Overview
Conditions: 150 mM KOAc, 10 mM MgCl2 and 150 mM bicine (pH 8.5), 24 C. The record gives the reactivity of an RNA of 177 nucleotides to DMS and 2A3. The data come from the RNA Mapping Database (RMDB), library RFM100. For 2A3 the reverse transcriptase was SuperScript II with manganese. Reactivities are given for positions 27 through 126.
[RMDB]
RNA sequence: GGGAACGACUCGAGUAGAGUCGAAAAUGUGCAUUUUCUCGUUAUGUUUUCAAACAGAAUUGAAUAGUAUAUCAAUGCGAACAAAAAAUGUUCGAUUGCUGUUUGAAAAGUGUCGAGGUCGCUACAGUUAACGAGCCCUAUUCGUAGGGCUCGUUAAAAAAGAAACAACAACAACAAC
Reactivity to DMS in 0.01 (KOAc 150mM, MgCl2 10mM, bicine 150mM(pH8.5), 24C), signal-to-noise 2, nucleotides 027 to 126: u030g000u030g000c070a170u030u020u060u030c000u000c010g000u000u030a080u010g020u020u000u000u000c000a010a000a020c000a020g020a200a100u000u000g010a020a060u010a110g020u020a080u020a070u040c030a030a000u000g010c110g000a040a050c120a010a040a120a070a120a080u020g000u000u000c010g020a070u000u030g000c000u000g000u000u010u020g000a040a030a000a040g020u020g000u000c010g000a040g000g000u070c180g000c000u020a010c080a020g040
Reactivity to 2A3 in 0.01 (KOAc 150mM, MgCl2 10mM, bicine 150mM(pH8.5), 24C), signal-to-noise 3, nucleotides 027 to 126: u040g000u010g000c030a060u010u020u110u110c000u010c010g000u050u160a070u200g300u000u000u000u000c000a000a020a000c000a000g020a110a050u060u040g030a150a040u140a120g210u190a080u030a030u230c100a030a040u110g140c010g050a020a040c040a030a090a010a120a010a100u170g000u010u000c000g000a000u010u040g090c020u000g000u000u000u000g000a000a000a000a020g050u050g010u000c000g000a000g000g040u090c030g000c030u120a040c010a100g030